Chemical mapping of a 177-nucleotide RNA with 2A3 and DMS. The DMS profile rests on 6,364 reads. For 2A3 the reverse transcriptase was SuperScript II with manganese. DMS adducts were read by reverse transcription with MarathonRT. Source: RMDB library M2PK50, as collected in RNAgym.
[RMDB]
RNA sequence: GGGAACGACUCGAGUAGAGUCGAAAACAUCGCGACUUCGGUCGCGAUGAAAGUUGUGCUCCCUCACGCAUAACAAAUCCCAAUGAGGGUUGGUGACUGCAAAACGACACGCCUUCGGGCGUGUCAAAUCGGAUAUUAGAUUCGUCUAAUAUCCGAUAAAAGAAACAACAACAACAAC
Reactivity to 2A3 in 0.01 (KOAc 150mM, MgCl2 10mM, bicine 150mM(pH8.5), 24C), signal-to-noise 1, nucleotides 027 to 126: c000a010u000c000g020c000g020a020c010u040u040c260g100g000u010c010g010c010g010a000u000g000a000a000a000g030u020u000g000u000g010c000u070c010c060c000u020c020a030c070g030c020a030u020a050a020c000a070a140a040u010c000c000c030a000a090u170g020a070g010g030g030u000u040g060g020u050g070a160c090u090g030c020a010a020a050a140c120g000a020c000a000c000g020c020c000u060u070c200g040g010g000c000g050u000g000u000c000a000a000
Reactivity to DMS in 0.01 (KOAc 150mM, MgCl2 10mM, bicine 150mM(pH8.5), 24C), signal-to-noise 4, nucleotides 027 to 126: c000a010u000c010g010c010g000a020c000u000u020c190g030g010u000c000g020c000g010a000u000g000a030a050a120g000u000u000g010u000g010c020u000c050c010c010u000c030a140c250g000c000a010u000a030a010c020a080a100a090u010c000c000c000a120a050u010g000a030g000g000g010u010u000g000g010u000g010a090c120u000g000c090a060a050a110a130c180g000a020c000a000c000g010c000c000u000u010c200g040g000g010c000g040u000g000u000c000a000a030